Chemical mapping of a 170-nucleotide RNA with 2A3 and DMS. Reactivities are given for positions 27 through 129. Conditions: 150 mM KOAc, 10 mM MgCl2 and 150 mM bicine (pH 8.5), 24 C. For DMS the reverse transcriptase was MarathonRT.
[RMDB]
RNA sequence: GGGAACGACUCGAGUAGAGUCGAAAACUCAUCCUCGGCGAGGGCGACGGUCCUCAGUUCUCUCUAUUCUUUCUUGAAAGAGGAGACUGCUGGACCAAACGCCCGAGCCGGGAUGGGCCGCAUACCGUACCUUGCUUCUUCGGAAGCAAGAAAAGAAACAACAACAACAAC
Reactivity to 2A3 in 0.01 (KOAc 150mM, MgCl2 10mM, bicine 150mM(pH8.5), 24C), signal-to-noise 9, nucleotides 027 to 129: c000u000c000a000u020c010c040u260c110g000g000c000g000a020g000g000g000c000g010a040c100g010g010u000c000c000u010c000a020g020u220u050c030u000c030u000c060u060a300u090u020c030u080u220u060c110u130u220g070a030a010a010g030a020g080g010a010g010a000c000u010g070c040u010g000g000a000c000c000a010a010a010c000g000c000c000c000g000a000g000c000c000g000g000g000a010u010g000g000g000c030c010g110c060a080u120a150c010c020g050u090a090c010
Reactivity to DMS in 0.01 (KOAc 150mM, MgCl2 10mM, bicine 150mM(pH8.5), 24C), signal-to-noise 9, nucleotides 027 to 129: c020u030c020a000u010c010c020u100c070g040g010c000g010a270g020g020g030c030g040a100c300g040g020u010c010c040u040c010a030g010u100u040c010u010c010u040c050u060a210u040u020c000u040u150u000c190u070u140g050a030a010a050g030a030g060g040a000g020a020c000u030g070c160u020g020g030a040c010c040a010a020a040c020g030c020c000c020g010a080g070c000c030g030g020g020a000u000g010g040g040c030c000g090c160a130u070a170c010c000g070u130a080c110